[RMDB]
Conditions: 150 mM KOAc, 10 mM MgCl2 and 150 mM bicine (pH 8.5), 24 C. The record gives the reactivity of an RNA of 177 nucleotides to 2A3 and DMS. The 2A3 profile rests on 1,326 reads. Reactivities are given for positions 27 through 126. Source: RMDB library M2PK50, as collected in RNAgym.

RNA sequence: GGGAACGACUCGAGUAGAGUCGAAAAGGAACAUCCUUCGGGAUGUUCCAUAGGGGGCGCCUCUCGCUAAGCGGCGCGCAGAGGCGCGCAGCGCAGCUUGAAAGUAAGCCUAGUUCGCUAGGCUUAAACUUUACUCCCGUUUCGACGGGAGUAAAGUAAAAGAAACAACAACAACAAC
Reactivity to 2A3 in 0.01 (KOAc 150mM, MgCl2 10mM, bicine 150mM(pH8.5), 24C), signal-to-noise 1, nucleotides 027 to 126: g010g000a010a000c080a000u000c000c010u030u120c190g040g010g000a000u000g000u000u030c000c000a000u000a010g020g000g000g020g030c030g080c060c010u000c010u000c010g000c030u030a130a030g150c040g130g000c020g000c000g010c070a010g060a110g290g090c020g000c000g000c010a000g010c010g000c000a030g030c010u070u140g080a170a070a050g090u140a010a010g000c030c000u010a020g000u040u090c120g000c130u000a010g030g000c010u000u000a000a000
Reactivity to DMS in 0.01 (KOAc 150mM, MgCl2 10mM, bicine 150mM(pH8.5), 24C), signal-to-noise 2, nucleotides 027 to 126: g000g010a010a000c000a000u000c000c010u000u010c220g030g010g010a010u000g010u010u000c010c000a020u010a030g000g000g010g000g020c080g010c000c000u000c010u000c090g020c050u000a080a190g020c130g010g020c180g010c070g020c100a060g020a060g000g020c010g020c010g010c020a020g010c040g000c130a040g020c030u010u020g010a070a050a100g010u010a020a010g010c000c000u000a000g000u010u010c200g000c000u000a000g000g010c000u000u000a010a050